[RMDB]
RNA sequence: GGGAACGACUCGAGUAGAGUCGAAAAACGGGCAGUGGCGAUGGCAACGCGGCAGCCGCAGGGUCGACUUCUUCGCAGCCGCAACAGACGGGGUACGGGCAAAGAGGGGAACUCGUUCUGUUGGAAGAUCGAUCGGAUAUUUCGAUAUCCGAUCGAUAAAAGAAACAACAACAACAAC
Reactivity to DMS in 0.01 (KOAc 150mM, MgCl2 10mM, bicine 150mM(pH8.5), 24C), signal-to-noise 2, nucleotides 027 to 126: a120c110g000g000g000c020a080g010u000g010g040c000g030a080u070g020g000c010a050a090c060g010c050g000g010c090a140g010c100c030g020c100a000g010g000g050u000c050g000a100c180u060u040c030u000u000c090g000c050a080g040c020c030g000c030a040a090c050a070g000a070c010g000g000g010g020u020a080c120g010g000g010c090a070a070a070g010a060g090g000g020g000a060a110c030u010c010g000u040u010c060u010g010u010u040g000g030a070a060g000
Reactivity to 2A3 in 0.01 (KOAc 150mM, MgCl2 10mM, bicine 150mM(pH8.5), 24C), signal-to-noise 4, nucleotides 027 to 126: a010c020g000g020g000c020a040g020u040g070g020c050g060a110u110g050g000c030a060a060c070g020c000g010g010c010a020g060c050c020g000c030a020g040g020g010u070c040g030a080c030u070u040c010u070u060c060g000c050a020g010c000c000g010c010a000a010c010a010g040a010c020g000g030g000g000u120a020c040g020g030g000c050a050a080a020g060a060g020g020g000g010a010a020c000u000c030g030u110u010c020u020g030u000u010g010g020a030a030g050